[RMDB]
The record gives the reactivity of an RNA of 177 nucleotides to DMS. Source: RMDB library OK2TRN, as collected in RNAgym.

RNA sequence: GGGAACGACUCGAGUAGAGUCGAAAAUUCUGCCUCUGAACAACAGGUAAGCAAAAGGCACACAUGAUUAAAGGAGGCUGCUAACCUCUGUGGAGGAGGGCCCUGCCCCAGGACAAGGGUUAAGACAUGCACUGCUUAAGUUCGCUUAAGCAGUGCAAAAAGAAACAACAACAACAAC
Reactivity to DMS in 0.01 (KOAc 150mM, MgCl2 10mM, bicine 150mM(pH8.5), 24C), signal-to-noise 1, nucleotides 027 to 126: u010u000c030u000g000c020c000u000c020u010g020a160a070c100a140a040c100a040g010g010u000a070a150g000c040a110a040a150a090g000g000c040a110c090a070c080a110u000g010a080u020u010a040a110a300g000g010a130g000g000c030u000g000c010u000a070a090c000c010u000c040u020g000u010g010g000a080g000g000a080g000g000g010c030c040c030u000g020c040c000c010c090a170g000g000a030c120a060a120g000g010g010u010u000a060a040g000a050c300a100
The DMS profile rests on 700 reads. Conditions: 150 mM KOAc, 10 mM MgCl2 and 150 mM bicine (pH 8.5), 24 C. Reactivities are given for positions 27 through 126. DMS adducts were read by reverse transcription with MarathonRT.